[RMDB]
RNA sequence: GGGAACGACUCGAGUAGAGUCGAAAACUUUCAUCAAUUCUGCGCACCAUUGCUCCACUGGAUAGCAAAGCGAUGGCCCGAGCUAAAACACGGCUGGAUGGUUUGCUAAAACCACAGGGCAGUUUGGCACUACCUCUGGUUUCGACCAGAGGUAGUGAAAAGAAACAACAACAACAAC
Reactivity to DMS in 0.01 (KOAc 150mM, MgCl2 10mM, bicine 150mM(pH8.5), 24C), signal-to-noise 3, nucleotides 027 to 126: c070u010u010u020c050a080u020c070a080a110u010u000c090u000g000c100g030c090a190c040c000a040u000u020g020c010u000c040c050a180c220u000g010g010a100u010a030g030c020a070a090a030g020c020g010a210u000g000g000c020c020c010g000a060g000c080u020a060a040a070a170c110a130c190g000g010c020u010g000g000a220u010g010g000u000u000u000g030c090u000a060a030a070a040c000c000a030c090a120g010g020g010c030a030g020u000u030u000g010g010
Reactivity to 2A3 in 0.01 (KOAc 150mM, MgCl2 10mM, bicine 150mM(pH8.5), 24C), signal-to-noise 3, nucleotides 027 to 126: c020u090u190u120c060a130u040c040a160a200u150u050c040u100g040c060g010c050a030c020c000a010u020u050g010c010u020c030c030a070c090u030g000g050a080u070a040g000c000a010a050a010g120c000g030a030u030g000g010c010c060c030g010a040g030c070u240a150a080a030a050c050a010c040g040g000c020u010g020g100a130u080g030g100u030u040u030g030c010u030a040a080a050a070c000c010a000c020a040g000g000g020c010a030g040u000u060u090g030g000